[RMDB]
RNA sequence: GGGAACGACUCGAGUAGAGUCGAAAAUGUGAGUACUCGCGGAUCAUACGCAUGAGCACGACGAUCCUAGCGAUCAGAUCGUACGUCUAGGUACGAUCCUAGCAGCUAGCUAGCUCAUGGAUCGAUCCUUGGGUGGUCGUUUCGACGACCACCCAAGAAAAGAAACAACAACAACAAC
Reactivity to DMS in 0.01 (KOAc 150mM, MgCl2 10mM, bicine 150mM(pH8.5), 24C), signal-to-noise 2, nucleotides 027 to 126: u040g020u010g010a120g010u000a090c050u010c040g080c270g070g000a060u010c050a160u010a100c170g000c030a030u000g000a010g040c030a150c270g010a140c230g000a040u030c100c020u000a010g020c050g030a080u000c210a130g010a000u000c000g010u000a000c000g010u020c220u010a110g000g000u000a010c010g000a000u000c000c030u000a080g010c250a160g000c050u000a050g010c050u000a100g030c040u010c040a040u000g000g010a100u000c100g000a050u000c010
Reactivity to 2A3 in 0.01 (KOAc 150mM, MgCl2 10mM, bicine 150mM(pH8.5), 24C), signal-to-noise 1, nucleotides 027 to 126: u240g060u000g070a040g090u040a090c020u040c060g000c020g040g010a010u010c010a060u060a150c080g040c080a020u020g020a020g000c040a020c100g280a000c060g000a030u000c000c020u010a020g000c000g050a050u050c030a040g000a050u010c020g030u000a000c030g150u140c290u210a050g000g250u000a050c000g000a000u020c020c000u020a010g000c040a000g050c020u070a010g050c010u100a020g000c000u010c000a020u000g050g000a010u010c130g010a000u010c000
Chemical mapping of a 177-nucleotide RNA with DMS and 2A3. For DMS, 1,162 sequencing reads were counted. Source: RMDB library OK2TRN, as collected in RNAgym. The reactions ran in a buffer of 150 mM KOAc, 10 mM MgCl2 and 150 mM bicine (pH 8.5), at 24 C. The 2A3 profile rests on 1,301 reads. Reactivities are given for positions 27 through 126. DMS adducts were read by reverse transcription with MarathonRT.